This 177-nucleotide RNA was probed chemically with DMS and 2A3. For 2A3, 11,001 sequencing reads were counted.
RNA sequence: GGGAACGACUCGAGUAGAGUCGAAAAGAUAUGGAAGGGCAAGGGAGACUUGUUUCGGAAACGAAACAAAGGUCAUCGAUCUUGCCUUCCUAAGUCAAACUGGAUCAUGGUUCGCCAUGAUCCAGAAGCUGUCUUAAAUCUUCGGAUUUAAGACAGCAAAAGAAACAACAACAACAAC
Reactivity to DMS in 0.01 (KOAc 150mM, MgCl2 10mM, bicine 150mM(pH8.5), 24C), signal-to-noise 2, nucleotides 027 to 126: g000a000u000a010u010g000g000a000a000g000g010g010c000a020a020g000g000g010a010g020a030c010u000u000g000u000u000u000c000g020g010a010a010a030c000g010a020a000a010c000a010a020a070g080g020u000c000a300u000c220g000a010u000c000u010u000g000c000c000u000u000c000c000u010a000a100g010u000c010a150a120a300c020u000g000g010a010u000c000a000u000g020g010u000u010c300g050c010c000a000u000g000a000u000c010c000a000g000a040a150
Reactivity to 2A3 in 0.01 (KOAc 150mM, MgCl2 10mM, bicine 150mM(pH8.5), 24C), signal-to-noise 3, nucleotides 027 to 126: g000a000u010a000u050g020g030a020a050g180g130g090c020a000a000g020g000g010a030g020a010c020u050u020g000u010u000u000c000g000g000a010a010a010c000g000a000a010a000c030a050a040a020g300g050u040c020a090u300c020g000a000u000c000u000u000g010c000c010u020u000c000c000u000a000a010g010u000c010a050a050a120c010u010g010g000a000u000c000a000u000g000g090u080u090c300g120c100c000a000u000g010a000u000c000c000a000g000a000a020

The reactions ran in a buffer of 150 mM KOAc, 10 mM MgCl2 and 150 mM bicine (pH 8.5), at 24 C.
DMS adducts were read by reverse transcription with MarathonRT.
Reactivities are given for positions 27 through 126.